[RMDB]
RNA sequence: GGGAACGACUCGAGUAGAGUCGAAAAAUGGCGAAAGCAUGGGGAACUACAUCUGUGUCGCGAGUUCGAUUCUCGCCAGGGCCUGGUCCUGUAGCUCAGUUGGUAGAGCAAGCUGUUCCCCGGACACAAAAUCCAGCUAGGUUCGCCUAGCUGGAAAGUAUCCUUUUUCGUUCGCGAAAAAGGAUACAAAAGAAACAACAACAACAAC
Reactivity to DMS in 0.01 (KOAc 150mM, MgCl2 10mM, bicine 150mM(pH8.5), 24C), signal-to-noise 2, nucleotides 027 to 156: a100u000g030g020c040g020a160a100a080g000c040a070u000g040g020g010g000a050a070c050u000a010c060a130u000c060u010g010u000g060u000c030g000c010g000a010g030u000u000c000g010a300u010u000c000u000c000g030c020c030a100g010g010g000c010c130u010g090g000u010c000c000u000g010u000a090g010c000u000c000a150g000u000u000g030g030u000a070g020a030g040c010a130a120g020c030u000g000u000u000c000c000c010c020g060g000a090c070a080c030a050a020a060a110u000c000c000a020g000c000u000a010g020g020u000u000c270g010c010c000u000a020g020c000u000g000g000a000a000a040
Reactivity to 2A3 in 0.01 (KOAc 150mM, MgCl2 10mM, bicine 150mM(pH8.5), 24C), signal-to-noise 3, nucleotides 027 to 156: a000u070g080g000c020g030a100a040a000g040c060a070u100g000g000g000g010a020a010c030u100a050c130a140u060c030u010g080u020g020u140c020g000c010g010a010g000u000u010c000g000a000u000u010c000u000c000g010c000c000a000g000g000g000c040c210u170g090g030u020c000c010u000g020u030a000g020c000u000c010a060g020u200u170g080g180u180a000g000a010g010c020a020a000g020c030u030g000u020u010c000c000c000c000g020g000a010c030a000c020a030a120a000a030u000c000c000a000g010c000u000a000g060g000u020u010c090g040c020c000u010a010g000c000u000g000g000a000a000a000